[RMDB]
Background: Structure probing data (2A3 and DMS) for a 177-nucleotide construct. Values cover nucleotides 27 to 126. 2A3 adducts were read by reverse transcription with SuperScript II with manganese. It was measured as part of the RMDB library OK2TRN.
RNA sequence: GGGAACGACUCGAGUAGAGUCGAAAAUCUAGCACAUGCGUACUCCAUGGGUACCGAUCAUGUCCAUGGCUAGAUGCUAGCAUGUCUCGUACCACAUGGUAUCUGAUCCGUCCAUGCUCUCAUAGUAAUGUAACCUGCCAUUCGUGGCAGGUUACAUAAAAGAAACAACAACAACAAC
Reactivity to 2A3 in 0.01 (KOAc 150mM, MgCl2 10mM, bicine 150mM(pH8.5), 24C), signal-to-noise 1, nucleotides 027 to 126: u050c010u000a040g000c080a050c040a070u090g030c040g100u090a010c020u030c000c020a010u050g010g050g000u030a040c100c090g020a070u120c000a000u030g030u030c090c010a070u080g030g000c000u080a170g030a170u070g060c000u000a000g040c020a010u050g010u030c030u000c110g100u040a070c030c000a070c040a260u100g010g000u040a050u030c070u060g040a010u070c050c000g050u000c030c010a020u030g030c000u000c010u010c060a090u050a070g130u170a200
Reactivity to DMS in 0.01 (KOAc 150mM, MgCl2 10mM, bicine 150mM(pH8.5), 24C), signal-to-noise 2, nucleotides 027 to 126: u010c000u000a040g040c060a070c100a130u030g020c070g020u000a110c150u000c000c040a030u000g000g010g000u000a030c020c020g020a070u010c050a270u000g010u010c050c100a070u000g000g020c090u000a020g020a130u010g010c070u000a080g000c050a030u000g000u020c080u010c100g020u000a050c010c030a120c060a020u000g000g000u000a070u020c110u010g000a050u010c000c140g010u000c050c070a030u000g020c060u000c030u000c050a060u000a040g010u000a080